This 177-nucleotide RNA was probed chemically with DMS and 2A3.
The 2A3 profile rests on 1,350 reads.
The RNA was probed in 150 mM KOAc, 10 mM MgCl2 and 150 mM bicine (pH 8.5) at 24 C.
RNA sequence: GGGAACGACUCGAGUAGAGUCGAAAACGGCGCACACGCCGAUACCGCUGUCGACAUUCAAGAGUUCAUGGUGGCGCCAAUUGGCGCGCCCAGCUUCGUCGAGGCGUUGCGCUGGGGCGCUGAGGUGGAUUGCAGAAGCUUUCGAGCUUCUGCAAUCAAAAGAAACAACAACAACAAC
Reactivity to DMS in 0.01 (KOAc 150mM, MgCl2 10mM, bicine 150mM(pH8.5), 24C), signal-to-noise 2, nucleotides 027 to 126: c030g040g010c000g020c030a060c200a030c050g000c020c140g000a210u020a050c120c060g030c030u000g030u000c040g010a000c040a150u000u030c300a080a150g010a060g000u000u000c070a070u010g000g000u000g010g030c020g060c010c010a290a250u000u010g040g040c010g030c010g000c000c010c100a050g010c030u010u000c120g020u000c000g030a200g000g000c010g000u000u000g000c040g040c070u020g000g010g010g000c040g000c040u000g010a070g020g030u000g020
Reactivity to 2A3 in 0.01 (KOAc 150mM, MgCl2 10mM, bicine 150mM(pH8.5), 24C), signal-to-noise 2, nucleotides 027 to 126: c020g010g000c000g000c010a050c010a000c120g010c010c000g000a010u040a020c010c020g020c040u060g250u080c060g020a010c020a050u090u200c140a270a140g020a030g110u050u090c100a100u160g050g030u060g220g000c000g010c030c000a040a190u260u280g000g000c000g010c000g020c000c000c000a000g010c000u120u100c050g010u020c010g000a010g000g030c010g000u070u040g000c070g000c020u060g040g010g030g000c060g000c060u060g010a030g030g050u130g050